Structure probing data (2A3 and DMS) for a 177-nucleotide construct. The 2A3 profile rests on 1,199 reads. Values cover nucleotides 27 to 126.
RNA sequence: GGGAACGACUCGAGUAGAGUCGAAAAGCGAGCUGGAACUUUCCGACGAGCAUAAUGGCAUCAUCGAUUUGGCCGAAAAUGCGCCGGUCGGCACAAGCUUUGCGGCUUAUAUGGGCCUUGAUGAUCAACCCGCAGGUAUAUUCGUAUACCUGCGGGUAAAAGAAACAACAACAACAAC
Reactivity to 2A3 in 0.01 (KOAc 150mM, MgCl2 10mM, bicine 150mM(pH8.5), 24C), signal-to-noise 1, nucleotides 027 to 126: g040c030g000a000g050c020u010g040g050a030a070c030u170u100u000c020c000g010a070c020g010a020g030c010a030u100a070a090u210g080g010c020a020u020c020a020u100c070g200a160u120u050u250g030g000c000c040g040a030a090a000a060u050g000c000g020c050c010g040g090u070c040g010g000c010a000c020a070a000g000c000u100u060u200g150c000g010g030c030u090u020a030u030a040u210g060g010g000c000c030u040u070g040a030u040g010a040u050c030a020
Reactivity to DMS in 0.01 (KOAc 150mM, MgCl2 10mM, bicine 150mM(pH8.5), 24C), signal-to-noise 3, nucleotides 027 to 126: g030c020g000a110g030c020u000g000g000a080a220c150u000u000u000c010c040g010a070c070g000a200g000c040a070u020a090a130u020g010g000c030a090u010c040a080u010c100g000a160u020u010u010g020g010c010c010g010a030a060a070a040u000g000c120g000c090c020g010g020u000c100g010g000c170a040c200a070a090g030c060u000u010u010g030c110g000g010c020u000u000a090u020a070u010g000g000g000c020c010u010u000g020a080u010g010a070u010c110a080
The data come from the RNA Mapping Database (RMDB), library OK2TST. 2A3 adducts were read by reverse transcription with SuperScript II with manganese.